[RMDB]
RNA sequence: GGGAACGACUCGAGUAGAGUCGAAAAUCGAUCUGUCCGGCUACCGCUACGCCAGCCUCAAUCCGAACACGCCGCUGACCGAGGUCUACGGUUCCGGCGAGGUCGGCGCGCUGGUGCUGCGCGCCGACAGUGGACCACUGUUCGCAGUGGUCCACUGAAAAGAAACAACAACAACAAC
Reactivity to 2A3 in 0.01 (KOAc 150mM, MgCl2 10mM, bicine 150mM(pH8.5), 24C), signal-to-noise 1, nucleotides 027 to 126: u080c010g040a030u030c050u100g090u070c090c000g000g020c030u050a070c010c030g010c060u030a020c040g040c010c000a000g000c010c010u130c080a080a130u010c020c020g020a020a000c020a010c060g010c020c010g060c150u130g020a010c000c010g040a020g060g140u030c070u140a070c010g000g000u040u070c030c010g030g030c010g030a030g030g030u050c020g030g110c080g000c060g000c060u030g000g020u030g040c000u010g000c010g120c100g000c000c000g000a020
Reactivity to DMS in 0.01 (KOAc 150mM, MgCl2 10mM, bicine 150mM(pH8.5), 24C), signal-to-noise 3, nucleotides 027 to 126: u000c070g010a100u010c030u000g020u010c070c050g000g000c030u010a070c200c050g000c060u000a200c070g000c060c030a050g010c020c070u010c140a140a130u010c030c020g010a040a080c120a210c050g020c020c000g010c140u010g030a030c030c010g000a100g010g010u010c110u000a080c030g010g000u000u010c300c000g020g000c020g010a040g010g000u000c000g010g000c240g040c300g030c020u000g010g000u000g010c070u000g020c020g070c060g000c010c000g010a070
Annotation: The record gives the reactivity of an RNA of 177 nucleotides to 2A3 and DMS. For DMS the reverse transcriptase was MarathonRT. The RNA was probed in 150 mM KOAc, 10 mM MgCl2 and 150 mM bicine (pH 8.5) at 24 C. Values cover nucleotides 27 to 126. It was measured as part of the RMDB library OK2TST. In probing experiments dimethyl sulfate is read out at A N1 and C N3, which are open when not base-paired.